[RMDB]
RNA sequence: GGGAACGACUCGAGUAGAGUCGAAAAGGGGUCUUGCCUUGUCAGGUAGCGUUGCGUCUUGGAUUUAUAGGCUGAAGCCUCCACGGCCUAUUGUCAGACGCAUGCUACCUUGGAUUUAGGCAAGACGGAGGCACCCAAAGUCAGUUUCGACUGACAAACACAUAGCAUUAUUCGUAAUGCUAUGUGUAAAAGAAACAACAACAACAAC
Reactivity to 2A3 in 0.01 (KOAc 150mM, MgCl2 10mM, bicine 150mM(pH8.5), 24C), signal-to-noise 6, nucleotides 027 to 156: g040g000g000g010u010c010u000u000g010c000c010u020u020g030u020c050a060g000g040u000a000g000c070g080u070u110g000c010g000u000c030u120u240g120g010a070u220u300u050a020u050a000g000g000c000u020g090a140a020g050c030c050u040c050c020a030c010g020g000c000c010u000a010u000u020g030u030c050a040g000a010c000g000c000a000u000g000c000u000a000c000c000u010u030g010g000a010u140u130u220a010g000g000c000a000a000g000a000c000g000g010a010g010g030c060a080c010c010c000a040a040a020g010u000c000a000g000u000u060u280c180g070a040c000u010g000a010c000a000a120
Reactivity to DMS in 0.01 (KOAc 150mM, MgCl2 10mM, bicine 150mM(pH8.5), 24C), signal-to-noise 2, nucleotides 027 to 156: g010g020g030g030u000c000u000u000g000c000c010u000u000g000u010c020a020g020g020u010a000g010c000g030u000u000g010c020g030u000c020u000u000g030g010a060u000u000u000a020u000a010g010g020c020u010g020a070a130g030c050c020u000c020c040a300c050g000g010c010c000u000a020u000u000g010u010c050a030g010a040c000g000c000a020u000g010c000u000a010c000c000u000u020g010g000a060u000u000u000a030g020g030c010a110a020g010a020c020g000g020a040g040g010c030a170c020c000c010a070a090a180g010u000c000a030g020u000u000u010c250g020a120c000u000g010a010c030a080a150
An RNA of 207 nucleotides, treated with 2A3 and DMS and read out base by base. For 2A3 the reverse transcriptase was SuperScript II with manganese.